[RMDB]
RNA sequence: GGGAACGACUCGAGUAGAGUCGAAAAGAAGGUAUGAACGUUGGAAGGCGCUUCCGUGUGAGCGGAAUUAGGAGUUGGCGGACGGAUGUGGCCGCUUUCAUACCAAGAACGGGAUAACCGGAAGAAAGGGUUAAUGAUACUUCGGUAUCAUUAACCCAAAAGAAACAACAACAACAAC
Reactivity to 2A3 in 0.01 (KOAc 150mM, MgCl2 10mM, bicine 150mM(pH8.5), 24C), signal-to-noise 3, nucleotides 027 to 126: g060a090a030g000g010u010a000u010g000a030a000c060g010u030u180g100g220a260a080g040g040c000g000c010u010u030c000c000g010u120g060u010g080a100g020c060g020g090a030a050u080u030a110g100g010a090g090u160u120g130g000c010g020g070a000c000g000g020a000u040g010u010g030g000c000c000g000c000u000u000u000c000a000u000a000c000c000a000a000g030a060a000c000g010g010g010a060u120a300a210c000c000g010g030a030a080g020a070a140a050
Reactivity to DMS in 0.01 (KOAc 150mM, MgCl2 10mM, bicine 150mM(pH8.5), 24C), signal-to-noise 2, nucleotides 027 to 126: g000a160a090g010g020u000a000u010g000a010a050c300g000u030u010g020g050a180a060g020g000c020g000c060u000u000c000c000g010u010g000u030g000a270g010c020g000g000a050a040u020u030a030g000g000a200g010u020u030g000g030c020g000g000a030c030g000g010a010u050g010u040g000g020c000c010g040c000u000u000u000c000a000u000a020c010c010a070a110g020a050a140c000g000g000g000a150u040a100a100c020c000g030g000a070a120g000a050a180a120
Source: RMDB library OK1LIB, as collected in RNAgym. Structure probing data (2A3 and DMS) for a 177-nucleotide construct. For 2A3 the reverse transcriptase was SuperScript II with manganese. The reactions ran in a buffer of 150 mM KOAc, 10 mM MgCl2 and 150 mM bicine (pH 8.5), at 24 C. The DMS profile rests on 3,632 reads. Values are in units of 0.01, from 0 to 300, in steps of 10.